The record gives the reactivity of an RNA of 177 nucleotides to DMS and 2A3. It was measured as part of the RMDB library TTRDEL. The reactions ran in a buffer of 150 mM KOAc, 10 mM MgCl2 and 150 mM bicine (pH 8.5), at 24 C.
[RMDB]
RNA sequence: GGGAACGACUCGAGUAGAGUCGAAAAGAUAUGGAUGCAUCGCUUUGAUCUCACGUAACAUCACGUCGGAAACGACGUGUGGUGAGGGAGCGAUGUCCUAAGUCAAACCUGUACUUCGGUACAGGAACUUGCUAGUUGCGUUCGCGCAACUAGCAAGAAAAGAAACAACAACAACAAC
Reactivity to DMS in 0.01 (KOAc 150mM, MgCl2 10mM, bicine 150mM(pH8.5), 24C), signal-to-noise 1, nucleotides 027 to 126: g000a090u000a300u020g000g000a100u000g030c020a000u000c000g000c000u000u000u000g010a070u030c010u000c000a000c000g030u000a060a130c190a010u000c010a030c010g000u000c000g000g000a030a090a160c010g000a030c000g000u000g010u010g020g010u000g000a020g030g000g000a010g010c010g010a010u000g010u000c000c000u000a080a230g000u000c020a050a110a050c010c000u010g000u000a000c000u000u010c160g010g030u000a000c000a000g000g000a030a060
Reactivity to 2A3 in 0.01 (KOAc 150mM, MgCl2 10mM, bicine 150mM(pH8.5), 24C), signal-to-noise 1, nucleotides 027 to 126: g070a000u130a020u140g030g000a050u280g060c000a040u000c010g000c010u300u220u090g060a080u030c010u000c010a000c020g160u200a180a020c040a240u220c000a020c000g020u000c020g000g100a020a090a020c040g000a000c010g030u010g000u000g020g010u020g000a030g000g000g000a020g030c000g020a000u000g000u000c000c020u020a090a020g020u020c040a060a070a130c010c020u000g000u000a010c000u050u040c300g170g000u020a000c020a000g010g010a000a040